[RMDB]
RNA sequence: GGGAACGACUCGAGUAGAGUCGAAAAGAGCUUAGUUCGGAGGUAUGCUAUAACGGUAUGUGCCGUUUAUGUUCACAUACUUAGAUAUGGCUUCAAAUACCCUUCUAUAGUAUUUGAUCGAACUAUAGAUAGUAUUGACAUUCGUGUCAGUGCUAUCAAAAGAAACAACAACAACAAC
Reactivity to 2A3 in 0.01 (KOAc 150mM, MgCl2 10mM, bicine 150mM(pH8.5), 24C), signal-to-noise 2, nucleotides 027 to 126: g130a020g010c040u030u030a000g020u030u020c020g000g000a030g030g050u060a020u100g030c010u000a010u000a060a040c010g010g000u010a010u050g040u070g010c010c030g080u090u120u070a160u160g030u110u140c030a010c020a030u030a010c000u140u300a060g030a150u150a030u140g000g000c000u140u090c080a050a040a050u080a040c000c070c000u160u090c100u090a120u190a140g060u010a060u000u070u120g110a140u100c000g000a000a000c000u000a010u130a200